[RMDB]
RNA sequence: GGGAACGACUCGAGUAGAGUCGAAAACCCUUAGCAUUCGUGCUAAGGGAAAUAACGGUCGGCUCAUGCAGCUAGUCGAAAAUGCUGCUCCACCUUUUGGUAAAAUCUGGCCGUUCGCGGCCAGAAAGUACCAUGUAGCGUUCGCGCUACAUGGUACAAAAGAAACAACAACAACAAC
Reactivity to 2A3 in 0.01 (KOAc 150mM, MgCl2 10mM, bicine 150mM(pH8.5), 24C), signal-to-noise 1, nucleotides 027 to 126: c000c000c000u000u010a000g020c000a000u000u070c190g020u020g040c000u030a020a000g010g000g050a060a160a020u150a020a020c040g000g070u030c050g050g010c040u010c100a070u200g000c000a000g000c020u030a030g200u190c100g050a060a000a030a000u120g020c020u000g020c020u000c010c000a050c000c000u060u120u090u080g070g000u150a010a050a060a110u040c000u010g010g000c020c000g000u000u050c120g000c020g000g000c020c000a000g010a000a030a000
Reactivity to DMS in 0.01 (KOAc 150mM, MgCl2 10mM, bicine 150mM(pH8.5), 24C), signal-to-noise 1, nucleotides 027 to 126: c000c000c000u000u000a000g000c000a030u000u030c200g040u000g010c010u010a000a030g000g000g020a000a070a050u020a110a060c270g010g000u000c120g010g010c300u010c050a120u000g000c030a030g010c010u000a070g010u000c130g010a120a050a070a090u000g040c000u000g010c030u030c070c070a070c100c000u000u000u030u000g020g000u010a050a110a040a030u010c000u020g000g020c000c000g090u020u000c140g030c000g030g000c010c000a010g030a000a000a100

Structure probing data (2A3 and DMS) for a 177-nucleotide construct.
It was measured as part of the RMDB library M2PK50.
For 2A3, 1,316 sequencing reads were counted.
For DMS, 804 sequencing reads were counted.
Conditions: 150 mM KOAc, 10 mM MgCl2 and 150 mM bicine (pH 8.5), 24 C.